Notes: The record gives the reactivity of an RNA of 177 nucleotides to DMS and 2A3. For DMS the reverse transcriptase was MarathonRT. Values cover nucleotides 27 to 126. For 2A3, 1,054 sequencing reads were counted. Source: RMDB library OK2TRN, as collected in RNAgym. 2A3 adducts were read by reverse transcription with SuperScript II with manganese.
RNA sequence: GGGAACGACUCGAGUAGAGUCGAAAACAUGGAUCGGGUCCUCGUCGUGCCACCCCAACAUGCGCGCGGCCCGGCGCCACGCCGAAUCGCUGGGUGAGACGGCCGUAUUCGUCGAGGUCGACGGCGAGAUGUGCUCGCAGUUCGCUGCGAGCACAUCAAAAGAAACAACAACAACAAC
Reactivity to DMS in 0.01 (KOAc 150mM, MgCl2 10mM, bicine 150mM(pH8.5), 24C), signal-to-noise 1, nucleotides 027 to 126: c070a140u000g020g000a080u010c000g020g000g010u010c040c020u010c010g000u010c040g020u000g010c100c010a220c000c030c000c020a120a060c100a030u020g010c060g020c020g000c090g010g000c000c000c060g010g010c100g020c300c180a030c110g010c010c000g000a100a080u000c110g000c020u050g010g010g010u000g060a120g000a190c020g020g000c120c050g000u000a110u000u000c030g050u010c010g000a210g000g010u020c030g000a070c000g010g010c080g020a050
Reactivity to 2A3 in 0.01 (KOAc 150mM, MgCl2 10mM, bicine 150mM(pH8.5), 24C), signal-to-noise 1, nucleotides 027 to 126: c060a060u160g150g000a120u070c010g020g010g100u060c010c000u020c020g040u000c040g020u090g090c000c030a070c010c000c020c000a040a050c020a030u220g050c100g000c000g000c020g050g000c000c000c010g010g000c040g000c000c010a060c020g030c010c010g140a090a030u030c010g030c100u190g010g040g020u150g060a040g020a010c040g020g000c050c000g060u090a150u050u070c060g010u000c040g040a100g060g060u000c030g040a130c040g030g030c010g010a100

The RNA was probed in 150 mM KOAc, 10 mM MgCl2 and 150 mM bicine (pH 8.5) at 24 C.